[RMDB]
RNA sequence: GGGAACGACUCGAGUAGAGUCGAAAAGCAAGGAUCAGAUAGAUGCUGGAAUGGCAAAAAUGAAAGAGAGACUGGAAGGCAUGAACGAGAUGUCUGAAUCCCUCAAUGAUGCAAAGCCUUCCUGUCAAAAGAGAUCCUAUUUCGAUAGGAUCUCUUUAAAAGAAACAACAACAACAAC
Reactivity to DMS in 0.01 (KOAc 150mM, MgCl2 10mM, bicine 150mM(pH8.5), 24C), signal-to-noise 8, nucleotides 027 to 126: g010c160a130a110g010g020a060u000c010a010g000a060u010a060g030a100u000g010c020u000g000g030a100a070u040g010g000c020a030a040a080a090a080u050g000a070a090a090g010a130g010a120g000a020c010u010g010g000a010a010g000g010c000a100u020g010a120a100c190g010a110g010a090u020g000u000c020u000g000a080a090u000c010c000c040u020c110a080a070u040g010a070u020g010c090a070a070a100g000c010c000u000u000c000c000u010g000u000c010a060
Reactivity to 2A3 in 0.01 (KOAc 150mM, MgCl2 10mM, bicine 150mM(pH8.5), 24C), signal-to-noise 6, nucleotides 027 to 126: g070c030a000a150g040g020a040u050c010a000g030a050u080a040g120a050u120g020c010u050g150g200a230a170u270g060g000c060a030a030a060a040a070u230g090a070a170a030g150a000g010a000g010a020c010u030g020g000a010a000g000g020c020a040u130g090a030a020c040g020a040g040a200u120g010u000c010u020g020a050a090u020c020c020c000u030c020a040a200u260g060a040u140g110c080a110a110a010g000c000c000u000u000c000c000u000g000u020c010a010